[RMDB]
RNA sequence: GGGAACGACUCGAGUAGAGUCGAAAAGAUAUGGAACGUGAACUACAGUAUGCUAGCCAUCGAUCUCGGAAACGAGGGAGGCUGUCAUACUGCACGUUCCUAAGUCAAACUGGCCUUCGGGCCAGAACUAGCUUGAGGUGUUCGCACCUCAAGCUAGAAAAGAAACAACAACAACAAC
Reactivity to 2A3 in 0.01 (KOAc 150mM, MgCl2 10mM, bicine 150mM(pH8.5), 24C), signal-to-noise 1, nucleotides 027 to 126: g040a020u060a020u160g000g010a000a000c010g000u020g010a030a090c170u190a070c300a000g000u000a000u000g000c040u060a000g000c000c010a230u300c140g070a070u000c030u020c000g000g030a110a080a080c010g000a010g000g000g010a020g000g000c000u010g040u050c000a000u000a020c010u000g000c000a010c000g000u010u010c000c000u020a020a000g010u020c000a020a090a150c010u010g020g020c000c010u070u080c300g060g000g000c040c010a000g010a050a010
Reactivity to DMS in 0.01 (KOAc 150mM, MgCl2 10mM, bicine 150mM(pH8.5), 24C), signal-to-noise 1, nucleotides 027 to 126: g000a080u000a300u000g000g000a030a000c000g000u000g000a080a030c070u050a300c000a000g000u000a010u000g000c050u000a020g010c000c000a250u000c230g000a030u000c000u000c010g030g020a130a050a150c020g010a010g000g020g000a000g020g030c000u010g010u000c010a020u000a000c000u000g060c050a000c000g010u000u010c000c000u000a000a100g020u030c050a070a120a140c000u000g000g000c000c000u010u010c120g040g000g020c000c020a000g000a000a130

Chemical mapping of a 177-nucleotide RNA with 2A3 and DMS. It was measured as part of the RMDB library TTRDEL. As a SHAPE reagent, 2A3 marks flexible, mostly unpaired nucleotides at the ribose 2'-OH.